[RMDB]
RNA sequence: GGGAACGACUCGAGUAGAGUCGAAAAUUGAUAUCUGCUAAAACCCGGUGCAUUCAUCAAUGCAGGUUAAGCCAAAGGGAUGUCCCGCCCGGAGGCCGACAAUCCAGGGAACCGGAUGUCAUCACGUAAAACCGUCAGUUCUUCGGAACUGACGGAACUAUCACAAUUGGUUCGCCAAUUGUGAUAGAAAAGAAACAACAACAACAAC
Reactivity to 2A3 in 0.01 (KOAc 150mM, MgCl2 10mM, bicine 150mM(pH8.5), 24C), signal-to-noise 4, nucleotides 027 to 156: u030u010g000a010u000a010u010c000u020g020c070u100a000a040a130a230c010c010c030g070g040u070g000c010a020u010u130c040a090u110c080a090a070u020g000c020a020g050g020u060u090a060a010g000c010c000a000a010a010g000g000g000a020u030g030u000c000c010c000g030c000c000c010g000g000a010g000g000c000c000g010a020c040a080a090u050c020c040a070g000g020g000a040a020c030c020g000g000a000u000g010u000c020a050u030c060a020c140g140u120a030a040a070a120c000c010g000u000c000a010g010u000u000c010u040u100c180g110g000a010a000c000u000g010a000c000g000g000a000a000
Reactivity to DMS in 0.01 (KOAc 150mM, MgCl2 10mM, bicine 150mM(pH8.5), 24C), signal-to-noise 2, nucleotides 027 to 156: u000u000g010a080u000a000u010c020u010g060c050u000a130a110a030a190c020c010c030g100g090u020g010c000a050u010u000c070a080u000c140a130a150u000g010c010a130g010g000u010u000a150a100g050c020c000a040a300a250g000g000g000a140u010g020u000c000c020c040g000c000c010c000g020g010a300g000g010c010c000g000a130c130a040a060u010c040c020a070g010g040g000a110a120c300c020g000g000a020u000g020u000c010a100u000c150a080c060g010u010a070a080a130a110c010c020g010u000c000a030g010u000u000c010u010u040c260g020g000a000a000c000u010g000a000c000g000g010a020a030